[RMDB]
RNA sequence: GGGAACGACUCGAGUAGAGUCGAAAAUGAGGAUAAUUCCGAUGAGGUGUUUUUGCUAAUUGAAAACUUUUCCCAAUACCCCGCUAUUAGUUUUACUGAUCAUAGUAAAACUUUUAGCAAUUUUUAAGUGCAUGCUAUAGUUCGCUAUAGCAUGCACAAAAGAAACAACAACAACAAC
Reactivity to 2A3 in 0.01 (KOAc 150mM, MgCl2 10mM, bicine 150mM(pH8.5), 24C), signal-to-noise 2, nucleotides 027 to 126: u120g000a030g030g030a020u030a200a080u280u070c020c020g000a070u120g100a080g000g000u050g040u080u010u020u050u120g070c050u060a170a210u150u210g090a050a010a000a030c030u140u050u010u020c010c000c000a020a000u060a060c020c020c010c020g000c000u000a000u000u000a020g000u000u000u000u000a000c000u000g220a270u240c060a170u190a070g000u000a000a000a000a000c000u000u000u000u010a010g000c000a000a000u100u120u020u020u060a150a020
Source information: Chemical mapping of a 177-nucleotide RNA with 2A3. The RNA was probed in 150 mM KOAc, 10 mM MgCl2 and 150 mM bicine (pH 8.5) at 24 C. 2A3 adducts were read by reverse transcription with SuperScript II with manganese.